[RMDB]
RNA sequence: GGGAACGACUCGAGUAGAGUCGAAAACAAAAGGUCGCAAUGGGCAAUCCGCAGCCAAGCUCCCAUAUGCUGGGAGAAGGUUCAGAGACUAUAAUCGGAUGGGCGCAAGCUUAAGGUAUAGUCCACUCCCACUUCGAAAGAGGUGCUAUAAAACUAUAGCUACUUAUACGUUCGCGUAUAAGUAGCUAAAAGAAACAACAACAACAAC
Reactivity to 2A3 in 0.01 (KOAc 150mM, MgCl2 10mM, bicine 150mM(pH8.5), 24C), signal-to-noise 1, nucleotides 027 to 156: c010a000a110a000a000g020g040u050c060g050c180a120a080u060g040g000g000c010a000a050u120c030c040g000c070a020g000c020c020a050a060g040c000u000c000c020c020a020u080a150u190g100c080u030g010g000g000a020g000a040a030g020g000u070u120c020a040g150a010g000a050c030u080a080u120a090a220u090c020g060g030a060u080g060g000g020c000g040c100a050a050g010c030u120u140a130a030g000g010u020a040u010a020g000u000c010c010a030c050u030c010c010c010a040c020u010u010c000g030a010a020a020g020a040g000g000u010g000c010u070a100u140a300a110a040a040c020u060a050u000